[RMDB]
RNA sequence: GGGAACGACUCGAGUAGAGUCGAAAAACGUGUUCGUUCGAACUCACGAUCGUUCGUGAUCACUCACGAGAGUGUGAUCUCUCUCGAACGUGUACGUGAUCGAACGAGAGAACUCACGAACUCACGAUCGAUCGAGAUCACUCACGAUCGUACACUCGAAUUGGCGAGAGUUCGCUCUCGCCAAUUCAAAAGAAACAACAACAACAAC
Reactivity to 2A3 in 0.01 (KOAc 150mM, MgCl2 10mM, bicine 150mM(pH8.5), 24C), signal-to-noise 1, nucleotides 027 to 156: a000c090g020u010g070u080u070c060g020u020u060c000g020a070a040c040u000c060a000c010g000a010u010c020g030u060u000c000g010u010g040a060u070c030a020c040u070c010a070c150g190a180g000a050g120u030g050u030g090a070u070c130u000c010u000c000u020c010g000a010a010c000g020u040g050u110a030c020g000u000g000a050u090c040g000a010a080c020g000a000g020a000g000a080a040c000u010c070a040c070g070a120a020c040u000c000a030c040g000a070u030c000g010a050u140c100g000a020g000a070u110c140a070c220u020c000a000c040g000a000u000c000g010u000a030c010a000c050u070c070

Conditions: 150 mM KOAc, 10 mM MgCl2 and 150 mM bicine (pH 8.5), 24 C. Chemical mapping of a 207-nucleotide RNA with 2A3. It was measured as part of the RMDB library OK3TST.